[RMDB]
RNA sequence: GGGAACGACUCGAGUAGAGUCGAAAAGCGAAAGUUGCCAUGAGACCGUAACUUUCGUAGUCAUUGUUAAAGGGGCAGGUCUCGCUCUUUUGUCAUUGCGGUUGCCUAGAGGCAUGGUCGUUUACCGAAAAGAGCUCAUUCUUCGGAAUGAGCUCAACAAAUGUAAUGGGUUCGCCCAUUACAUUUGAAAAGAAACAACAACAACAAC
Reactivity to 2A3 in 0.01 (KOAc 150mM, MgCl2 10mM, bicine 150mM(pH8.5), 24C), signal-to-noise 8, nucleotides 027 to 156: g020c010g000a010a000a000g000u020u010g000c020c030a110u150g080a030g020a120c030c010g010u010a000a000c000u010u010u010c010g000u010a010g010u020c040a060u040u130g050u060u130a050a050a020g020g010g000g000c040a030g010g080u030c020u030c050g000c010u020c010u010u070u050u090g070u040c030a060u020u120g040c030g080g020u060u060g020c010c010u050a090g020a090g090g000c030a030u070g030g010u010c010g000u020u040u040a270c010c010g010a060a050a030a040g010a000g000c000u000c000a000u000u000c000u020u080c180g050g000a000a000u000g000a000g030c000u000c000a000a000
Reactivity to DMS in 0.01 (KOAc 150mM, MgCl2 10mM, bicine 150mM(pH8.5), 24C), signal-to-noise 5, nucleotides 027 to 156: g030c010g000a020a010a030g020u000u000g020c010c060a160u000g000a090g010a050c050c080g000u000a030a020c010u000u010u000c020g040u000a060g020u010c090a120u000u010g020u000u000a050a090a100g020g010g010g020c090a090g020g010u000c030u010c030g000c130u000c030u010u000u000u000g020u000c040a120u000u000g020c050g020g030u000u000g020c020c040u000a100g020a220g000g020c040a070u000g020g010u000c030g020u000u000u000a090c030c020g000a050a060a140a130g010a030g020c000u000c000a020u000u000c000u000u000c300g040g000a030a010u000g010a010g000c000u010c000a000a050